[RMDB]
RNA sequence: GGGAACGACUCGAGUAGAGUCGAAAACAAGGAGCUGGCUGCAGAGACACAGCGCAUCUUGCGCGAUGCUGCUAGGAGCGACAGGAUAGGCAAGGGAGCAGCCCCACAGGUGCAGCCACUCAGCGGAAAAUGGGUACAUUUUCGAAUGUACCCAUUUAAAAGAAACAACAACAACAAC
Reactivity to DMS in 0.01 (KOAc 150mM, MgCl2 10mM, bicine 150mM(pH8.5), 24C), signal-to-noise 9, nucleotides 027 to 126: c060a120a180g010g000a020g020c240u000g020g010c010u010g010c010a050g000a150g010a160c170a110c210a140g000c020g010c030a080u000c120u010u010g010c030g020c040g010a070u000g010c010u000g010c020u000a090g010g000a170g010c030g000a130c090a070g000g000a100u000a110g010g010c040a060a150g010g000g000a070g010c020a050g000c010c020c010c030a080c160a090g010g010u010g010c010a010g010c010c010a040c010u000c010a120g010c160g010g000a060